[RMDB]
RNA sequence: GGGAACGACUCGAGUAGAGUCGAAAAUCGACGAAGGCUGGUAAGCCGAGUUGGCGAGUAGCGCCGAGUGGAGUAAAGACGGAGAACCUCUCGAAAGAGACUGACUCCGCUUCCUCCGGCCGCUCCCGGCCUAGUAUACGUUCGCGUAUACUAGGCCAAAAGAAACAACAACAACAAC
Reactivity to DMS in 0.01 (KOAc 150mM, MgCl2 10mM, bicine 150mM(pH8.5), 24C), signal-to-noise 2, nucleotides 027 to 126: u010c000g010a000c010g010a170a170g000g030c000u000g010g070u020a080a080g020c000c000g000a260g010u000u010g000g000c040g010a080g030u000a060g030c070g000c020c010g000a140g000u000g000g010a130g000u000a060a020a060g000a180c020g000g000a050g000a060a180c300c270u000c010u000c010g020a120a150a140g000a000g000a010c060u010g020a300c000u000c000c010g010c010u000u010c020c000u000c000c010g000g010c000c030g010c000u000c020c040c000
Reactivity to 2A3 in 0.01 (KOAc 150mM, MgCl2 10mM, bicine 150mM(pH8.5), 24C), signal-to-noise 1, nucleotides 027 to 126: u070c000g000a020c010g010a070a040g010g010c030u130g110g300u300a110a040g000c030c020g010a010g000u010u010g030g010c010g000a050g010u090a030g020c010g010c060c020g000a050g010u000g030g000a030g000u120a000a020a080g120a080c000g000g020a010g010a020a010c000c000u020c000u000c070g020a040a070a030g020a010g000a010c030u020g040a020c000u000c000c000g000c000u010u000c000c010u000c010c000g000g000c090c030g010c010u040c000c000c010

The record gives the reactivity of an RNA of 177 nucleotides to DMS and 2A3. DMS adducts were read by reverse transcription with MarathonRT. For 2A3, 1,341 sequencing reads were counted.